An RNA of 177 nucleotides, treated with DMS and 2A3 and read out base by base. 2A3 adducts were read by reverse transcription with SuperScript II with manganese. Reactivities are given for positions 27 through 126.
RNA sequence: GGGAACGACUCGAGUAGAGUCGAAAACCGGUGUAACGUACCGGCGUGCCUGUAAUCCGUACGGGUUGUGGGAGCAAGAGCCCGGAGAUGGAUUCUGAGACACGAAUCCAGGCCCUACGGGGCGCAGAAAUAGAACCAAAUUCGUUUGGUUCUAUUUAAAAGAAACAACAACAACAAC
Reactivity to DMS in 0.01 (KOAc 150mM, MgCl2 10mM, bicine 150mM(pH8.5), 24C), signal-to-noise 9, nucleotides 027 to 126: c000c000g000g010u000g000u010a080a120c290g010u020a060c000c000g000g010c070g010u010g000c040c010u000g010u010a040a260u020c010c010g010u010a040c190g010g010g010u000u000g010u010g000g000g000a080g000c140a160a200g010a170g010c010c000c000g010g010a140g010a140u000g000g000a010u000u000c000u000g000a240g000a150c190a170c110g000a020a010u000c000c000a040g010g000c010c010c000u000a060c060g010g000g010g010c210g010c080a070g000
Reactivity to 2A3 in 0.01 (KOAc 150mM, MgCl2 10mM, bicine 150mM(pH8.5), 24C), signal-to-noise 9, nucleotides 027 to 126: c000c000g000g010u030g010u040a140a100c100g020u030a010c010c000g010g000c030g040u070g030c010c000u040g070u120a020a020u010c010c010g030u060a060c130g010g020g010u030u050g090u160g050g050g020a070g070c130a270a090g050a050g120c000c030c010g020g040a170g020a070u060g000g000a000u000u000c010u020g070a060g010a040c040a010c130g000a010a000u000c000c000a000g040g000c000c000c000u020a030c080g020g000g010g000c040g000c010a010g130